RNA sequence: GGGAACGACUCGAGUAGAGUCGAAAACGACUCAAUACGUCCCCGUCGUACAGAAUGGUAACAUAUCUCUCCAAAUAUCUGAGCUUGGGUAUACGGGUAAACCCAACCCCUUGGGAAGAUUGGGUAUAAAAGGAGCGAUCCUUCGGGAUCGCUCCAAGAGUUUACUACACUUCGGUGUAGUAAACUCAAAAGAAACAACAACAACAAC
Reactivity to 2A3 in 0.01 (KOAc 150mM, MgCl2 10mM, bicine 150mM(pH8.5), 24C), signal-to-noise 1, nucleotides 027 to 156: c010g020a000c020u010c060a000a100u040a080c010g020u050c030c050c060c010g140u100c000g000u070a070c070a130g070a110a190u080g050g030u100a180a130c030a090u130a110u080c070u000c030u000c050c000a090a150a090u210a110u070c010u060g010a020g060c000u020u020g060g000g000u010a020u010a050c000g000g030g020u160a210a150a210c000c010c010a000a030c000c000c000c000u010u030g040g000g000a010a000g000a040u050u080g050g010g010u180a180u110a160a040a030a040g000g010a000g020c000g020a010u000c000c010u040u070c140g050g000g050a000u000c000g000c010u000c000c000a000a000
Chemical mapping of a 207-nucleotide RNA with 2A3.
The RNA was probed in 150 mM KOAc, 10 mM MgCl2 and 150 mM bicine (pH 8.5) at 24 C.